[RMDB]
RNA sequence: GGGAACGACUCGAGUAGAGUCGAAAACUUUGCAGCUGCUGAUUCCAAGAAGUCCCAGCCCAAGAUCCAGCCUCCCUCUCCUGGUAAGGAUGGGGUCAGCGGCCCCACCAAGGCUGAGAGGGCCUGUUGCCCUGGCCUCUUAUUCAGGAUAUGAAUAAUACAGUUAAAUCUUCGGAUUUAACUGUAUAAAAGAAACAACAACAACAAC
Reactivity to DMS in 0.01 (KOAc 150mM, MgCl2 10mM, bicine 150mM(pH8.5), 24C), signal-to-noise 1, nucleotides 027 to 156: c050u000u000u000g010c020a100g020c000u000g010c000u000g020a160u010u000c030c000a160a150g010a130a070g030u010c020c000c030a190g040c050c000c030a070a140g020a120u000c050c020a020g010c020c040u010c030c000c000u000c030u000c000c040u020g030g010u000a080a070g030g030a030u000g000g000g010g040u010c000a120g000c100g030g000c030c010c000c010a060c120c030a110a060g010g040c040u010g000a160g000a150g020g040g030c020c050u000g010u000u000g020c020c010c030u000g030g010c050c000u010c030u040u000a060u000u000c000a030g040g000a120u010a120u010g010a090a040u010a130

Chemical mapping of a 207-nucleotide RNA with DMS. It was measured as part of the RMDB library OK3TST. The RNA was probed in 150 mM KOAc, 10 mM MgCl2 and 150 mM bicine (pH 8.5) at 24 C.